This 177-nucleotide RNA was probed chemically with 2A3 and DMS.
The DMS profile rests on 1,227 reads.
The data come from the RNA Mapping Database (RMDB), library TTRDES.
RNA sequence: GGGAACGACUCGAGUAGAGUCGAAAAGAUAUGGAGACAGGCCAGGGAGCUUCGCAUCGGAAACGAUGCAAAGCGACGAUCUGGCUGUCUCCUAAGUCAAAUCCUCCAGCCUUCGGGCUGGAGGAAAUCCAAUGAGACAGUUCGCUGUCUCAUUGGAAAAAGAAACAACAACAACAAC
Reactivity to 2A3 in 0.01 (KOAc 150mM, MgCl2 10mM, bicine 150mM(pH8.5), 24C), signal-to-noise 1, nucleotides 027 to 126: g030a040u120a030u140g000g000a000g000a010c050a060g130g300c000c020a040g000g130g040a020g080c000u020u040c040g040c050a000u000c020g000g000a030a040a050c000g040a000u030g060c000a000a020a020g000c050g070a080c110g050a130u010c000u000g000g020c010u010g000u020c000u000c010c000u010a000a000g000u000c010a080a010a160u030c000c010u000c000c000a030g000c030c000u080u230c290g260g000g000c020u000g000g000a000g000g010a020a000a010
Reactivity to DMS in 0.01 (KOAc 150mM, MgCl2 10mM, bicine 150mM(pH8.5), 24C), signal-to-noise 1, nucleotides 027 to 126: g010a040u010a300u020g020g000a000g000a000c010a020g020g020c000c000a030g000g000g020a080g010c000u000u000c170g000c000a000u000c000g010g010a130a080a170c000g000a000u020g010c010a010a010a010g040c010g000a040c300g020a070u000c000u010g010g010c000u000g010u000c000u000c010c020u020a010a060g000u000c040a090a190a130u000c000c000u000c000c000a030g000c000c000u000u040c230g040g000g060c000u000g010g010a010g010g000a000a010a020